[RMDB]
An RNA of 207 nucleotides, treated with 2A3 and DMS and read out base by base. It was measured as part of the RMDB library OK3TST. The RNA was probed in 150 mM KOAc, 10 mM MgCl2 and 150 mM bicine (pH 8.5) at 24 C. Values cover nucleotides 27 to 156. For DMS, 4,466 sequencing reads were counted. DMS adducts were read by reverse transcription with MarathonRT.
RNA sequence: GGGAACGACUCGAGUAGAGUCGAAAAUAACGUGCGCGUUUAAAUUUGGGGUUAGUUUUAGAUUUAGGUUUACAUUUAUAUGCGAGGUUGAAGGUGAAUUUUAACUUAAAUUUAAGUAUAGCGUGUAAUGUGGGUUCAUAUUUAAAUGGAAGGUGGGCUAGUUUAUAAGAUUCGUCUUAUGAAUUAGAAAAGAAACAACAACAACAAC
Reactivity to 2A3 in 0.01 (KOAc 150mM, MgCl2 10mM, bicine 150mM(pH8.5), 24C), signal-to-noise 1, nucleotides 027 to 156: u000a050a020c060g010u030g030c060g030c000g010u020u110u230a060a090a080u200u150u140g030g010g010g030u040u030a020g050u030u010u000u100a000g020a010u030u000u010a010g020g010u040u010u040a010c000a010u040u140u050a160u020a000u140g090c010g020a020g050g050u020u070g010a060a000g050g000u000g040a000a020u040u040u030u070a010a000c000u010u070a050a050a120u140u060u040a010a000g030u010a000u040a060g020c020g000u010g000u030a060a030u070g000u030g000g000g000u000u030c030a000u020a090u120u110u070a040a120a020u040g000g000a020a020g010g020u070g000g000g020
Reactivity to DMS in 0.01 (KOAc 150mM, MgCl2 10mM, bicine 150mM(pH8.5), 24C), signal-to-noise 2, nucleotides 027 to 156: u010a060a060c060g030u000g010c040g030c030g020u000u010u020a040a070a130u010u010u010g000g010g010g020u000u000a050g000u010u030u010u000a070g030a090u000u000u000a070g000g010u010u000u010a070c040a060u000u000u000a070u000a070u020g030c040g000a040g050g030u010u000g010a070a090g010g040u010g010a050a050u010u000u000u010a030a030c020u000u000a030a060a090u020u030u000a030a110g010u000a070u000a060g010c040g020u000g020u000a030a070u010g030u000g000g010g000u010u000c030a030u000a080u000u000u010a030a070a090u010g000g010a080a080g020g040u000g100g010g020